[RMDB]
Structure probing data (DMS) for a 177-nucleotide construct.
RNA sequence: GGGAACGACUCGAGUAGAGUCGAAAAGAUAUGGACAUAGCAACAGCCACGGAUCGGAAACGAUCCCGUGGACAUGCUGGGUCCUAAGUCAAAGGGUUGUAGACUGCUUCGGCAGUCUACAACCCAAGAUGUCGAGAGAGUUCGCUCUCUCGACAUCAAAAGAAACAACAACAACAAC
Reactivity to DMS in 0.01 (KOAc 150mM, MgCl2 10mM, bicine 150mM(pH8.5), 24C), signal-to-noise 1, nucleotides 027 to 126: g000a050u000a230u030g000g040a010c010a050u010a030g010c000a010a120c270a220g000c000c010a010c010g000g020a030u000c000g030g000a130a040a230c000g000a000u000c070c050c030g030u000g000g020a010c090a070u000g010c000u000g010g000g030u000c000c000u010a030a110g000u020c080a120a110a090g000g000g010u040u000g000u000a000g000a040c000u020g000c000u000u010c220g010g010c000a000g010u000c010u000a000c000a030a000c000c000c000a000a000
DMS (dimethyl sulfate) methylates the pairing face of unpaired adenines and cytosines.